[RMDB]
RNA sequence: GGGAACGACUCGAGUAGAGUCGAAAACACUUGAGAAAUCGGGAUUACACCUUGCCGAUACUGUCAAAGUUCGAGAGUUGAUGCUUACCGAGUAAGGUCCCUUUCCAAUUCUUGUGUCGUAACGAGGCCCGUCGACAAGUUUCGACUUGUCGACGGGAAAAGAAACAACAACAACAAC
Reactivity to 2A3 in 0.01 (KOAc 150mM, MgCl2 10mM, bicine 150mM(pH8.5), 24C), signal-to-noise 1, nucleotides 027 to 126: c030a000c010u000u050g010a030g050a080a130a050u050c050g000g040g070a030u150u220a060c040a060c070c000u040u090g050c010c020g000a040u010a040c030u030g080u180c090a120a070a060g000u080u120c090g090a060g020a050g090u010u090g020a040u090g050c000u020u020a020c000c030g050a060g060u020a030a100g050g000u090c000c000c060u000u000u000c060c010a060a040u060u080c000u020u070g000u000g030u040c030g030u040a010a030c020g020a020g120g000
Reactivity to DMS in 0.01 (KOAc 150mM, MgCl2 10mM, bicine 150mM(pH8.5), 24C), signal-to-noise 1, nucleotides 027 to 126: c060a110c070u000u010g010a110g000a050a140a130u000c090g010g050g010a140u010u010a120c250a110c110c100u010u010g010c020c000g030a020u000a070c220u000g010u010c110a010a070a110g000u000u010c120g010a160g000a110g000u000u000g020a140u000g030c140u010u000a040c010c020g020a110g030u000a070a050g010g000u010c000c060c000u000u010u000c020c060a080a160u000u000c050u000u000g020u000g010u000c110g000u000a120a090c090g000a150g000g000